[RMDB]
This 177-nucleotide RNA was probed chemically with 2A3 and DMS.
Reactivities are rounded to 0.1 and cut off at 0 and 3.
In probing experiments dimethyl sulfate is read out at A N1 and C N3, which are open when not base-paired.
The DMS profile rests on 3,737 reads.
Reactivities are given for positions 27 through 126.
The 2A3 profile rests on 3,938 reads.
The reactions ran in a buffer of 150 mM KOAc, 10 mM MgCl2 and 150 mM bicine (pH 8.5), at 24 C.
RNA sequence: GGGAACGACUCGAGUAGAGUCGAAAAGCGUUUAUGUGCUUACAUGAACGAGGGCAUACUUAGUCCUAAGUAUGCAGAGCCUUCUGUAAGCACAGAGGGCAGACUAAUGUUAGGACUAACAUUAGGAGGACAGCUUACUAUUCGUAGUAAGCUGUCCAAAAGAAACAACAACAACAAC
Reactivity to 2A3 in 0.01 (KOAc 150mM, MgCl2 10mM, bicine 150mM(pH8.5), 24C), signal-to-noise 3, nucleotides 027 to 126: g020c080g010u020u020u020a170u030g010u000g060c040u080u080a000c000a030u180g030a030a030c070g020a080g060g000g030c000a030u000a010c010u010u020a030g070u050c020c080u020a010a000g000u010a000u000g020c010a000g070a040g120c010c010u000u000c000u000g010u020a090a050g020c030a030c000a000g000a000g000g040g000c020a020g050a050c000u010a010a010u020g020u010u020a030g140g140a250c160u010a010a000c010a020u010u040a010g070g010a060
Reactivity to DMS in 0.01 (KOAc 150mM, MgCl2 10mM, bicine 150mM(pH8.5), 24C), signal-to-noise 3, nucleotides 027 to 126: g010c040g010u000u000u000a080u000g020u010g000c060u000u000a010c000a020u010g000a040a010c120g010a170g010g000g020c000a010u000a000c000u000u000a030g000u010c200c180u000a020a020g010u000a000u000g010c000a090g000a170g010c100c100u000u000c010u000g010u000a020a040g000c050a030c000a020g000a060g010g000g000c020a140g010a160c000u000a010a010u000g000u010u010a020g020g020a150c220u000a010a010c000a000u000u000a020g010g010a160